[RMDB]
RNA sequence: GGGAACGACUCGAGUAGAGUCGAAAAUAAUGCCUUACUCGGUGUAUAUAAGACCUACCUCUCUUAAAAUGGUUGAGACCAAGCUUCGUUGUAGAAACACUGAAGCUAACGAUGAGAUUCAUCGUCGUGUGAUAUUGGCAAAAACGGAUAUGGAUGAUCUUCACUUAGUCUUCGGACUAAGUGAAGAAAAAGAAACAACAACAACAAC
Reactivity to DMS in 0.01 (KOAc 150mM, MgCl2 10mM, bicine 150mM(pH8.5), 24C), signal-to-noise 2, nucleotides 027 to 156: u010a070a140u000g020c000c010u010u000a040c070u000c030g020g000u000g030u010a070u000a130u000a050a100g000a040c010c060u000a110c080c040u030c010u000c070u000u000a070a050a070a200u010g010g000u000u000g000a160g000a190c040c030a110a060g030c030u000u000c050g070u000u010g020u000a090g030a260a060a080c040a080c030u000g000a040a110g000c050u000a060a030c000g060a020u000g000a000g000a270u000u000c040a040u000c000g030u000c040g000u000g000u000g000a200u000a120u000u000g010g040c010a020a020a030a140a090c050g010g050a090u000a020u000g030g000a110u000g000a180
Reactivity to 2A3 in 0.01 (KOAc 150mM, MgCl2 10mM, bicine 150mM(pH8.5), 24C), signal-to-noise 3, nucleotides 027 to 156: u110a010a010u100g000c020c000u090u080a150c080u040c060g070g000u100g020u040a070u010a020u000a240a060g050a020c000c010u040a030c030c010u080c000u000c010u070u190a130a080a170a160u160g020g020u030u080g080a040g040a010c010c010a040a030g010c000u000u020c050g080u000u040g050u100a050g220a130a080a030c020a030c050u040g000a000a000g000c010u000a040a000c000g010a000u040g010a020g040a110u220u090c050a060u020c040g020u000c000g000u010g000u010g040a040u030a060u160u110g000g000c000a010a020a010a060a040c070g040g030a010u020a030u110g060g020a030u080g040a020